RNA sequence: GGGAACGACUCGAGUAGAGUCGAAAACCGCCCCGCCGGCGGUGCGUCAUCCCGGGGCUGCAAUGGUUUCGACGGGGCAUGAGGAGGGUGACUGAAGCCUGCUCGGUCAGAGCGAACCCGUAACAGCGCAGCCUUCUGAAUUCGUUCAGAAGGCUGCAAAAGAAACAACAACAACAAC
Reactivity to 2A3 in 0.01 (KOAc 150mM, MgCl2 10mM, bicine 150mM(pH8.5), 24C), signal-to-noise 2, nucleotides 027 to 126: c010c010g010c020c000c010c010g140c020c040g020g010c020g000g050u000g020c070g070u020c010a040u020c020c010c000g000g010g000g020c050u050g000c030a020a140u140g150g000u030u050u040c000g010a030c050g020g000g000g000c080a140u080g010a030g010g020a060g030g000g000u050g030a090c050u090g050a050a020g020c000c000u060g040c050u000c000g020g040u180c060a020g020a020g040c000g000a030a010c000c010c010g050u070a110a050c080a160g000c030
Reactivity to DMS in 0.01 (KOAc 150mM, MgCl2 10mM, bicine 150mM(pH8.5), 24C), signal-to-noise 2, nucleotides 027 to 126: c060c000g000c000c010c100c100g020c110c050g030g030c120g020g000u000g010c190g020u050c140a070u000c000c000c000g000g020g000g060c070u000g090c120a080a030u040g010g000u000u000u000c010g050a140c080g000g000g000g000c020a040u030g020a120g000g040a220g060g000g000u010g000a170c110u020g010a200a190g020c000c000u000g010c000u000c000g060g010u000c060a030g020a090g050c060g040a060a110c080c000c000g000u040a110a130c180a190g000c170